[RMDB]
RNA sequence: GGGAACGACUCGAGUAGAGUCGAAAAUCAAUGGACUUCGGUCCAUUGAAAAAGUCAAUAAAGCUAGUGCUGAGCUGAAUGACAACAGCACAAAGAAUAGAAAAAUCGUGCACUUCGGUGCACGAAAGUAAAUUAACGUGUUCGCACGUUAAUUUACAAAAGAAACAACAACAACAAC
Reactivity to 2A3 in 0.01 (KOAc 150mM, MgCl2 10mM, bicine 150mM(pH8.5), 24C), signal-to-noise 6, nucleotides 027 to 126: u020c000a000a000u000g000g000a000c010u030u040c230g090g000u000c000c000a000u000u000g000a000a010a000a000a000g080u050c050a040a090u100a260a180a000g000c010u060a030g000u000g020c000u010g010a000g000c010u050g120a130a150u200g030a070c030a060a010c000a040g010c020a000c010a010a050a010g090a070a080u200a090g150a040a130a010a000a030u030c010g010u010g000c000a000c010u040u060c230g090g000u000g000c000a000c010g000a000a000a000
Reactivity to DMS in 0.01 (KOAc 150mM, MgCl2 10mM, bicine 150mM(pH8.5), 24C), signal-to-noise 4, nucleotides 027 to 126: u000c000a010a010u000g010g000a010c000u000u010c240g050g030u000c000c000a000u010u010g000a000a050a080a140a140g010u000c040a040a060u000a120a090a010g010c010u000a100g020u000g000c020u000g000a020g020c010u000g010a120a100u010g000a060c150a030a120c010a000g010c020a010c000a110a100a090g010a080a090u010a150g000a040a050a110a070a100u000c010g010u000g000c000a010c000u000u010c180g020g000u000g000c010a010c000g000a000a010a030